[RMDB]
RNA sequence: GGGAACGACUCGAGUAGAGUCGAAAACUAAACAGGGUUUUCACCCUUCCUUUAGUUUCCUUCCCCUCCUGGAGAGGUCUUCUGCCCUAGCCCGGUCUUCGAAGCUUCCUUUGGCUACUACCCGGUGGUCUGUAUAAGGGUUCGCCCUUAUACAGACAAAAGAAACAACAACAACAAC
Reactivity to DMS in 0.01 (KOAc 150mM, MgCl2 10mM, bicine 150mM(pH8.5), 24C), signal-to-noise 1, nucleotides 027 to 126: c000u000a000a010a030c180a020g010g000g010u010u000u010u030c200a060c010c000c010u000u000c040c040u000u000u000a010g000u000u000u010c150c080u000u000c000c000c000c050u010c040c010u000g020g010a130g000a090g020g000u010c050u000u000c060u000g010c050c010c030u000a070g030c040c020c100g020g000u010c040u000u000c080g000a060a170g000c070u000u000c030c040u010u000u010g000g030c020u000a060c030u010a100c040c010c000g010g030u000g000
Reactivity to 2A3 in 0.01 (KOAc 150mM, MgCl2 10mM, bicine 150mM(pH8.5), 24C), signal-to-noise 1, nucleotides 027 to 126: c000u040a000a010a000c300a200g050g020g060u120u120u300u300c150a040c000c010c000u020u020c030c000u030u020u000a000g010u000u030u050c000c000u040u060c000c000c000c010u020c010c000u040g060g050a070g010a010g000g030u000c030u140u010c010u070g020c000c010c000u030a040g000c020c030c030g090g040u000c000u050u080c030g020a020a010g020c000u040u090c040c000u070u050u090g020g000c050u030a020c040u010a040c040c000c000g030g080u100g090

An RNA of 177 nucleotides, treated with DMS and 2A3 and read out base by base. The RNA was probed in 150 mM KOAc, 10 mM MgCl2 and 150 mM bicine (pH 8.5) at 24 C. 2A3 adducts were read by reverse transcription with SuperScript II with manganese.